Conditions: 150 mM KOAc, 10 mM MgCl2 and 150 mM bicine (pH 8.5), 24 C. Structure probing data (DMS and 2A3) for a 177-nucleotide construct. The DMS profile rests on 849 reads.
RNA sequence: GGGAACGACUCGAGUAGAGUCGAAAACUACAUAAAUUCGUUUAUGUAGCAUCGGCGACGCGCAGACUCCCCGUCAGACGGCUCUAGCCUUCCAAGCUCUGCACUCAACAGCUUUCGAGCUGUUGAACCUCGCUACUAAGUUCGCUUAGUAGCGAGGAAAAGAAACAACAACAACAAC
Reactivity to DMS in 0.01 (KOAc 150mM, MgCl2 10mM, bicine 150mM(pH8.5), 24C), signal-to-noise 1, nucleotides 027 to 126: c010u000a010c010a000u000a010a010a020u000u020c200g030u000u000u000a000u010g000u000a030g010c070a170u000c040g060g020c110g000a080c090g000c070g030c080a060g010a060c080u000c010c010c030c020g000u010c050a070g040a150c090g020g030c020u000c120u020a060g000c000c010u000u010c030c050a070a160g000c070u000c020u000g020c040a170c150u020c010a010a000c020a010g000c000u000u010u000c150g010a020g010c000u000g030u010u010g000a010a110
Reactivity to 2A3 in 0.01 (KOAc 150mM, MgCl2 10mM, bicine 150mM(pH8.5), 24C), signal-to-noise 2, nucleotides 027 to 126: c000u020a010c000a000u040a000a030a010u090u060c130g050u070u010u000a000u000g010u010a000g020c030a090u120c030g020g020c030g040a060c020g040c000g000c070a020g030a070c010u020c040c000c010c020g060u020c020a050g030a200c020g020g000c010u000c050u100a080g000c010c000u070u050c030c010a020a010g010c020u000c010u050g040c040a010c040u050c000a000a010c020a020g010c010u100u110u160c180g100a010g000c000u000g000u000u000g000a000a000
For DMS the reverse transcriptase was MarathonRT.